Source: RMDB library OK1LIB, as collected in RNAgym. An RNA of 177 nucleotides, treated with 2A3 and DMS and read out base by base. DMS adducts were read by reverse transcription with MarathonRT. 2A3 adducts were read by reverse transcription with SuperScript II with manganese. The reactions ran in a buffer of 150 mM KOAc, 10 mM MgCl2 and 150 mM bicine (pH 8.5), at 24 C. For 2A3, 4,912 sequencing reads were counted.
RNA sequence: GGGAACGACUCGAGUAGAGUCGAAAAAGGCUUGUCGCGUCGACUGUGAAAUCCCGCGGCUCAACUGCGGGCUUGCAGCCGAUACGGGCAGGCUGUAGGAACGUAAUUGAGAAUGAACAGCGGACGCAAUAAAAUAAUUAUUCGUAAUUAUUUUAUUAAAAGAAACAACAACAACAAC
Reactivity to 2A3 in 0.01 (KOAc 150mM, MgCl2 10mM, bicine 150mM(pH8.5), 24C), signal-to-noise 5, nucleotides 027 to 126: a000g060g000c030u030u030g020u030c010g000c000g060u010c000g010a100c000u010g000u010g130a030a030a070u120c010c000c000g010c000g030g010c030u040c190a100a030c030u030g010c000g000g000g010c000u000u040g000c010a000g000c000c000g010a020u040a060c020g020g030g000c010a010g000g000c000u000g010u010a010g000g050a040a010c030g040u100a040a090u100u110g020a050g050a130a130u140g030a070a030c030a050g030c040g050g080a020c030g000c060
Reactivity to DMS in 0.01 (KOAc 150mM, MgCl2 10mM, bicine 150mM(pH8.5), 24C), signal-to-noise 2, nucleotides 027 to 126: a110g020g000c030u010u000g020u010c010g010c020g010u000c010g000a070c010u000g000u010g000a050a060a110u030c010c000c000g010c020g020g030c070u060c210a080a190c040u000g000c000g010g000g010c150u000u000g000c000a000g000c000c000g010a070u020a030c050g000g010g020c010a080g000g000c000u010g010u010a040g020g010a050a060c040g010u020a080a070u010u000g010a090g000a080a080u020g010a090a080c070a050g010c060g000g000a050c060g020c070